[RMDB]
RNA sequence: GGGAACGACUCGAGUAGAGUCGAAAACUAUAUACUAUAUUGUCUAGCCUAUAGCAGGUGUUUUCUAAAGUUAACCAUAGUGAUCUCUAGGCAUGUCAAAUUAUCUGGUGCUACUUCAGGACCUACAAUGUAGCCCACUUCUUAUUUGUGAGAUCAAACUGAAACAGGUGUUCGCACCUGUUUCAGUAAAAGAAACAACAACAACAAC
Reactivity to 2A3 in 0.01 (KOAc 150mM, MgCl2 10mM, bicine 150mM(pH8.5), 24C), signal-to-noise 1, nucleotides 027 to 156: c100u180a100u060a000u100a280c030u170a220u070a160u300u140g010u030c040u000a000g000c040c000u000a060u020a100g040c120a010g000g030u060g120u090u150u100u000c090u130a120a050a020g010u070u080a040a050c100c040a000u080a030g060u030g090a130u040c000u000c010u010a000g010g000c000a000u040g040u040c010a050a070a140u130u030a030u240c040u040g060g060u130g040c000u000a040c000u180u180c060a090g080g180a130c010c000u030a120c030a000a130u060g000u040a070g030c020c000c020a040c030u090u090c010u080u100a150u240u040u000g040u000g100a060g000a020u070c050a140a020